[RMDB]
RNA sequence: GGGAACGACUCGAGUAGAGUCGAAAAAAUCUCUGAAUUCCCUUCUUCUUCCUCCAUAAUUCUUACACCAUCUUCUUCUUCUCCAUCUUUCCAUUACACGCAUCAACAGAAAUCUCCAAGACCCGACCGGUUGUGUCACAUUCGUGUGACACAACCGAAAAGAAACAACAACAACAAC
Reactivity to 2A3 in 0.01 (KOAc 150mM, MgCl2 10mM, bicine 150mM(pH8.5), 24C), signal-to-noise 1, nucleotides 027 to 126: a000a000u050c080u030c040u000g000a000a110u020u040c030c000c020u000u020c040u080u010c000u100u060c020c020u000c000c020a040u050a100a160u130u010c040u070u050a120c100a030c070c000a040u020c000u050u000c010u030u000c000u060u020c000u020c000c000a020u000c000u040u050u010c030c020a070u140u110a090c030a000c080g030c000a020u020c020a090a090c000a040g100a110a100a040u030c000u040c010c010a010a010g000a040c000c060c000g050a060c090
Structure probing data (2A3) for a 177-nucleotide construct. The data come from the RNA Mapping Database (RMDB), library RFM100. Conditions: 150 mM KOAc, 10 mM MgCl2 and 150 mM bicine (pH 8.5), 24 C.